[RMDB]
RNA sequence: GGGAACGACUCGAGUAGAGUCGAAAAUGGGUUGAACCAAAUAUUGGGAUAAGACGUCUAAUAUUCACUAAUAGAUACCACAAAAGGUGUUAGUUCAUUAAGACAGCAGGACGGUGGCCAUGGAAGUUGCAACUUUUAUUUUCGAAUAAAAGUUGCAAAAAGAAACAACAACAACAAC
Reactivity to 2A3 in 0.01 (KOAc 150mM, MgCl2 10mM, bicine 150mM(pH8.5), 24C), signal-to-noise 3, nucleotides 027 to 126: u120g010g000g000u060u100g040a010a010c030c010a000a140a020u210a070u070u140g020g010g030a030u030a180a050g070a070c030g000u000c000u000a000a080u020a070u080u070c020a070c020u050a000a040u010a060g160a040u150a150c000c000a030c120a020a270a040a040g020g010u010g010u050u010a030g000u000u000c020a030u040u050a030a030g040a050c050a000g070c020a040g040g070a010c070g030g020u020g060g000c000c000a000u030g030g000a110a020g070u050
Reactivity to DMS in 0.01 (KOAc 150mM, MgCl2 10mM, bicine 150mM(pH8.5), 24C), signal-to-noise 4, nucleotides 027 to 126: u020g000g000g000u010u000g000a070a100c020c060a070a090a050u010a100u000u000g000g010g020a070u020a090a140g010a100c100g010u000c010u000a040a060u010a030u010u000c110a070c030u010a040a050u010a090g000a060u000a050c030c020a080c100a070a070a080a120g010g000u000g000u000u000a060g010u010u020c080a050u010u000a060a090g000a040c070a080g010c050a040g020g020a040c080g000g020u010g000g010c040c040a050u010g020g000a080a080g010u030